[RMDB]
RNA sequence: GGGAACGACUCGAGUAGAGUCGAAAACUUGCAGAGAAGCAUCGUGGGGUAUUGAUUGUGACUCAUGAUCGGGAACUAGCUGAAAAGUGCCACCGAGAAGAGAUUCUCCGCGAUGGCACCUUAAUGCAGGUCCCUAAUUAUUCGUAAUUAGGGACCUAAAAGAAACAACAACAACAAC
Reactivity to 2A3 in 0.01 (KOAc 150mM, MgCl2 10mM, bicine 150mM(pH8.5), 24C), signal-to-noise 6, nucleotides 027 to 126: c030u040u080g000c020a010g030a010g010a210a030g040c020a010u010c000g020u040g000g000g010g040u130a110u060u210g180a170u110u150g140u180g130a050c010u000c050a110u060g040a050u050c040g000g000g030a060a120c050u070a090g050c020u080g050a040a090a040a020g050u050g050c030c020a050c000c010g000a020g010a040a000g020a000g020a020u090u000c010u020c010c040g030c050g120a140u000g010g000c020a020c010c000u060u090a080a040u080g020c030
Reactivity to DMS in 0.01 (KOAc 150mM, MgCl2 10mM, bicine 150mM(pH8.5), 24C), signal-to-noise 5, nucleotides 027 to 126: c050u010u010g030c070a050g010a110g000a120a120g010c060a020u000c010g030u000g000g000g010g040u000a110u010u040g010a140u010u010g010u010g020a120c020u000c010a040u010g000a190u010c020g020g010g010a120a140c110u030a150g010c030u010g010a110a050a090a040g000u000g000c070c020a110c000c030g000a020g000a110a010g000a110g010a150u010u010c000u010c030c090g030c060g000a050u010g010g000c010a010c070c030u000u000a040a090u010g010c050

Notes: An RNA of 177 nucleotides, treated with 2A3 and DMS and read out base by base. For DMS, 9,493 sequencing reads were counted. For 2A3, 5,303 sequencing reads were counted. 2A3 adducts were read by reverse transcription with SuperScript II with manganese.